[RMDB]
RNA sequence: GGGAACGACUCGAGUAGAGUCGAAAAAGGAAGGGUGUGUUCAUACCACCUAGCCAGAUGGAGACGUGGUUCCUAAGCGCAGUCCACACCCGCGAGGUUAUCGACGAUACCCUAUCUGCUAUUGAGGGAGCAGUGCCUAGUUCGCUAGGCACUGCUCAAAAGAAACAACAACAACAAC
Reactivity to 2A3 in 0.01 (KOAc 150mM, MgCl2 10mM, bicine 150mM(pH8.5), 24C), signal-to-noise 2, nucleotides 027 to 126: a000g160g010a020a140g000g000g000u050g010u010g010u010u130c030a060u130a150c000c020a000c000c000u020a000g100c020c010a100g000a070u120g030g000a070g000a010c070g000u030g000g060u070u040c000c030u010a100a020g000c060g000c040a010g010u000c000c000a000c020a000c000c030c040g010c030g030a020g070g000u130u090a100u150c020g010a060c090g030a030u070a070c000c000c000u020a190u000c030u070g090c010u060a150u180u120g100a150g110g060

Chemical mapping of a 177-nucleotide RNA with 2A3. The RNA was probed in 150 mM KOAc, 10 mM MgCl2 and 150 mM bicine (pH 8.5) at 24 C.